[RMDB]
Chemical mapping of a 177-nucleotide RNA with 2A3 and DMS.

RNA sequence: GGGAACGACUCGAGUAGAGUCGAAAAUGGUGGUUACUACGUCAAACCUGGAGGUACCAGUAGCGGAGAUGCCACCACUGCAUAUGCCAAUAGUGUCUUUAACAUUUUGCAGGCGACAACUGCUAAUAUGUCAUUAAGUCUUCGGACUUAAUGACAUAAAAGAAACAACAACAACAAC
Reactivity to 2A3 in 0.01 (KOAc 150mM, MgCl2 10mM, bicine 150mM(pH8.5), 24C), signal-to-noise 3, nucleotides 027 to 126: u080g010g010u020g000g020u050u110a130c010u010a000c010g070u060c060a090a120a130c030c000u000g010g030a110g160g150u170a160c000c000a000g010u000a000g000c000g000g000a000g000a040u080g000c000c010a000c000c000a000c000u010g050c020a030u040a070u200g080c030c030a050a030u090a090g110u090g070u060c100u050u180u110a100a060c020a080u070u130u030u100g010c020a000g000g020c010g060a030c030a050a050c010u050g000c000u000a060a060u040
Reactivity to DMS in 0.01 (KOAc 150mM, MgCl2 10mM, bicine 150mM(pH8.5), 24C), signal-to-noise 3, nucleotides 027 to 126: u010g030g030u000g020g020u010u010a230c020u000a030c020g020u010c070a050a170a210c300c000u000g000g010a220g020g020u020a170c020c020a030g000u000a300g020c010g000g000a020g000a290u000g000c010c000a020c000c000a050c020u010g010c080a040u010a100u000g000c020c090a040a090u000a080g020u000g040u000c060u000u010u020a090a170c100a090u000u000u010u000g000c030a030g010g040c060g010a020c110a080a080c060u000g010c020u000a040a180u000

It was measured as part of the RMDB library 15KREP. Reactivities are given for positions 27 through 126. For 2A3, 2,052 sequencing reads were counted.